About this RNA: This 177-nucleotide RNA was probed chemically with 2A3 and DMS. For 2A3 the reverse transcriptase was SuperScript II with manganese. The reactions ran in a buffer of 150 mM KOAc, 10 mM MgCl2 and 150 mM bicine (pH 8.5), at 24 C. Values cover nucleotides 27 to 126. Source: RMDB library VIROID, as collected in RNAgym.

RNA sequence: GGGAACGACUCGAGUAGAGUCGAAAAAUGGCGGAGUCCUAGGCAUCACAUCUUCGGGCGAUGCUGAAUCAAAUGGCGGGGCUAGGCAUCGCACCUCUAUCCGGUGUCAAAGCAAUGGCGCAGACCUGUUGAUAUAUAGCUUCGGCUAUAUAUCAACAAAAGAAACAACAACAACAAC
Reactivity to 2A3 in 0.01 (KOAc 150mM, MgCl2 10mM, bicine 150mM(pH8.5), 24C), signal-to-noise 2, nucleotides 027 to 126: a010u050g040g000c030g030g030a030g030u020c000c030u050a060g030g020c010a050u030c030a020c010a090u030c050u160u120c060g040g020g000c010g000a010u000g000c030u010g040a020a080u090c080a040a030a150u100g070g000c030g020g020g000g000c000u010a020g030g000c000a010u010c010g000c030a140c020c000u030c010u060a090u020c030c010g030g000u010g010u040c030a050a050a000g010c010a010a130u090g030g000c020g000c030a010g050a080c000c020u030
Reactivity to DMS in 0.01 (KOAc 150mM, MgCl2 10mM, bicine 150mM(pH8.5), 24C), signal-to-noise 3, nucleotides 027 to 126: a080u010g010g030c050g000g000a160g000u000c030c010u010a160g000g020c040a030u000c040a090c080a080u000c130u000u000c140g010g010g030c020g030a020u000g000c000u010g000a140a100u010c150a060a080a140u010g010g030c030g010g010g000g010c060u000a190g000g000c010a000u000c030g000c030a110c040c010u000c120u000a060u010c110c030g010g020u010g010u010c040a030a090a140g010c120a050a080u000g010g020c050g010c070a070g000a100c070c050u010